[RMDB]
The record gives the reactivity of an RNA of 207 nucleotides to DMS and 2A3. The DMS profile rests on 21,069 reads. Values cover nucleotides 27 to 156.
RNA sequence: GGGAACGACUCGAGUAGAGUCGAAAAACGUGUCCAAUGUAGCUAGUGUGGAGUAUAACAAAAAUAUCUUCUAUCAAUAAUUCCGAAAUGUGGAUGGACAAGUAGAUUUAUGCAGUUAUAUGGUACAAACUAAGAAUAUACUAAGGAUGGGCCAGUACAAAAUGCAUAAUUUCGAUUAUGCAUUUUGAAAAGAAACAACAACAACAAC
Reactivity to DMS in 0.01 (KOAc 150mM, MgCl2 10mM, bicine 150mM(pH8.5), 24C), signal-to-noise 6, nucleotides 027 to 156: a060c060g020u000g030u010c020c020a080a120u000g020u010a070g020c030u000a060g040u000g030u000g010g020a200g020u000a040u000a050a100c020a030a090a090a130a110u000a040u000c030u000u000c020u000a160u000c020a060a100u000a070a130u000u000c040c030g020a070a080a100u010g020u010g020g010a060u000g020g000a060c070a060a090g020u010a040g010a070u000u000u000a070u020g020c060a160g010u000u010a040u000a040u000g020g030u000a090c030a040a030a080c070u000a050a090g010a070a110u000a080u000a060c050u010a100a090g010g010a070u000g010g010g030c030c020a080g010u000a140
Reactivity to 2A3 in 0.01 (KOAc 150mM, MgCl2 10mM, bicine 150mM(pH8.5), 24C), signal-to-noise 6, nucleotides 027 to 156: a000c070g040u060g020u000c010c010a030a030u090g010u030a050g030c030u020a030g020u010g020u030g060g020a050g030u060a060u040a110a060c090a040a110a040a020a030u080a030u030c030u090u010c020u060a060u050c030a080a080u100a160a090u150u040c040c010g110a110a090a100u180g020u080g020g000a020u030g020g000a010c010a040a030g020u040a000g030a030u010u090u100a050u110g030c020a010g010u080u030a080u010a020u120g020g000u040a050c030a050a110a000c050u050a060a020g020a100a040u120a010u020a050c030u040a080a040g040g000a040u020g000g020g000c020c000a010g010u010a040